[RMDB]
RNA sequence: GGGAACGACUCGAGUAGAGUCGAAAACAGGCGGGGUUGCGGUCGAGCACGUGGAAUACGUAGCGCAGCCGUGCGUGCGCGGCGAACGUGCGUUCGCCCGAUUCGGGCUGCGCGGGCGCGGCGGCGAUACGACUCACGUAUUCGUACGUGAGUCGUAAAAAGAAACAACAACAACAAC
Reactivity to 2A3 in 0.01 (KOAc 150mM, MgCl2 10mM, bicine 150mM(pH8.5), 24C), signal-to-noise 5, nucleotides 027 to 126: c050a020g060g000c020g030g060g020g010u060u110g010c030g000g040u070c050g020a030g020c040a020c060g010u070g050g120a140a060u170a140c040g030u060a030g050c010g020c020a000g000c010c020g020u070g010c100g290u090g020c020g010c040g030g000c010g000a020a000c020g100u250g050c110g040u130u130c110g010c020c000c010g030a070u060u080c030g030g070g000c010u020g000c020g000c000g000g000g000c000g000c000g000g030c000g000g000c010g010a010
Reactivity to DMS in 0.01 (KOAc 150mM, MgCl2 10mM, bicine 150mM(pH8.5), 24C), signal-to-noise 8, nucleotides 027 to 126: c120a110g000g010c040g010g000g000g010u000u000g020c050g010g010u000c050g000a090g020c060a070c040g020u000g010g020a140a100u010a070c070g010u000a120g000c010g010c010a030g010c010c010g020u010g020c050g010u000g010c020g030c090g010g020c010g000a010a010c010g020u010g010c140g010u000u010c100g000c010c020c010g010a160u010u000c040g010g010g020c010u000g000c010g020c010g000g000g010c020g010c030g000g010c020g000g010c020g000a140